The record gives the reactivity of an RNA of 207 nucleotides to DMS and 2A3.
Conditions: 150 mM KOAc, 10 mM MgCl2 and 150 mM bicine (pH 8.5), 24 C.
The DMS profile rests on 3,413 reads.
Source: RMDB library RNAMAK, as collected in RNAgym.

[RMDB]
RNA sequence: GGGAACGACUCGAGUAGAGUCGAAAAAGACCUUCGGGUCUGAUGUCGCGUACUACUUGACAUGCGAUGGAGUACGAGGCGAUAAGUCCCAAAUAGGACUUUUGACGCCUUGAAACAUCGCAACAGCAAGUAUCGCACCAGGCGCGUUCGCGCGCAAGUCGCAUCAAAAAUUCGUUUUUGAUGCGACAAAAGAAACAACAACAACAAC
Reactivity to DMS in 0.01 (KOAc 150mM, MgCl2 10mM, bicine 150mM(pH8.5), 24C), signal-to-noise 2, nucleotides 027 to 156: a050g000a010c020c000u000u000c290g020g030g040u000c000u000g010a050u020g000u010c050g010c070g010u000a060c070u020a040c020u000u000g050a110c080a300u010g000c000g020a010u000g000g000a210g000u010a300c210g010a050g000g010c000g040a170u000a010a000g020u010c010c000c000a050a120a300u000a070g000g000a010c000u000u000u030u000g020a240c110g010c000c000u000u000g000a240a280a150c010a000u000c000g000c030a010a090c100a050g000c000a040a010g000u000a040u000c050g030c020a070c000c010a050g040g000c000g030c020g000u000u000c210g000c050g030c030g000c070a020a140
Reactivity to 2A3 in 0.01 (KOAc 150mM, MgCl2 10mM, bicine 150mM(pH8.5), 24C), signal-to-noise 4, nucleotides 027 to 156: a000g010a000c000c010u020u060c270g120g000g010u010c040u040g060a080u180g050u170c140g000c010g020u090a110c050u000a010c000u060u040g060a180c020a040u040g020c000g000a000u010g000g000a010g020u010a060c170g010a020g000g000c010g000a010u010a050a000g000u030c040c040c000a090a150a020u230a040g000g000a000c000u070u050u060u080g170a140c020g000c000c000u000u010g010a010a000a000c000a000u000c000g020c020a010a010c010a010g020c000a000a030g000u010a050u300c010g000c010a020c020c030a050g140g000c000g000c010g030u060u130c250g010c000g000c000g000c100a030a030